[RMDB]
RNA sequence: GGGAACGACUCGAGUAGAGUCGAAAAGUACACUAGACGCAUCUAGGUAGAGUCGCACGCACCAUGAUGUCAUGCGCUCAUGAGCGGUACCAUGGUACGAUCACAUGGGAUCCAUAGCGGAUCUGACGCUUGGAGGCACAUUCGUGUGCCUCCAAGCAAAAGAAACAACAACAACAAC
Reactivity to DMS in 0.01 (KOAc 150mM, MgCl2 10mM, bicine 150mM(pH8.5), 24C), signal-to-noise 1, nucleotides 027 to 126: g010u000a110c140a160c030u000a100g010a120c100g020c100a080u000c040u000a050g000g060u000a130g000a050g000u000c010g000c170a120c040g000c070a040c020c060a050u000g020a210u000g060u000c050a100u010g030c060g020c000u020c140a070u000g040a050g030c030g010g020u000a050c010c010a010u000g000g010u000a040c100g010a140u000c100a000c070a020u020g000g020g010a070u000c000c010a110u010a030g000c120g010g000a010u030c010u020g010a090c210
Reactivity to 2A3 in 0.01 (KOAc 150mM, MgCl2 10mM, bicine 150mM(pH8.5), 24C), signal-to-noise 1, nucleotides 027 to 126: g130u130a000c180a120c080u080a010g000a080c050g010c080a120u000c010u030a020g080g050u070a050g000a020g060u150c030g000c050a060c010g030c020a010c000c010a030u020g020a100u080g030u050c000a020u170g190c020g000c010u010c020a180u210g130a030g030c020g000g090u040a020c000c040a010u020g060g040u100a080c040g000a090u100c070a060c020a160u040g070g040g010a000u000c000c000a040u120a060g080c060g050g000a010u000c010u030g090a030c080

Structure probing data (DMS and 2A3) for a 177-nucleotide construct. The DMS profile rests on 836 reads. It was measured as part of the RMDB library OK2TRN.